[RMDB]
RNA sequence: GGGAACGACUCGAGUAGAGUCGAAAAUAAAAACAUGCUACUGGCGAAAGCCUUUUGACGUUGUCAUAUGACCUGAAUCAAAAGUAUUCUCACUGCUACCAAACUUCACAAGCAGAAUUUUUCAGGAGCAUAAAUUUAUCUUCGGAUAAAUUUAUGCAAAAGAAACAACAACAACAAC
Reactivity to DMS in 0.01 (KOAc 150mM, MgCl2 10mM, bicine 150mM(pH8.5), 24C), signal-to-noise 2, nucleotides 027 to 126: u030a040a080a070a050a080c070a050u030g020c060u000a050c130u000g000g000c010g000a110a110a110g010c010c000u000u010u020u000g000a050c170g020u000u020g000u000c030a150u020a050u000g020a150c010c000u010g000a070a060u050c140a020a030a080a090g010u010a040u030u010c050u000c070a290c040u000g000c000u000a150c130c090a060a100a080c110u050u050c190a090c170a130a060g020c070a000g010a110a070u030u000u010u000u000c020a030g000g010a300
Reactivity to 2A3 in 0.01 (KOAc 150mM, MgCl2 10mM, bicine 150mM(pH8.5), 24C), signal-to-noise 5, nucleotides 027 to 126: u140a010a080a020a000a000c060a020u080g020c020u050a080c020u050g030g010c010g060a080a020a010g020c000c000u050u020u010u050g060a040c060g010u040u070g020u070c040a080u060a080u190g030a040c000c010u020g050a040a040u050c030a010a040a030a100g050u050a120u110u020c020u020c010a050c030u010g010c000u040a060c050c080a170a120a160c080u170u150c120a070c030a100a020g020c010a030g060a170a090u070u050u000u040u010c010a000g000g040a010
An RNA of 177 nucleotides, treated with DMS and 2A3 and read out base by base.
Values cover nucleotides 27 to 126.
The DMS profile rests on 2,353 reads.
The data come from the RNA Mapping Database (RMDB), library OK1LIB.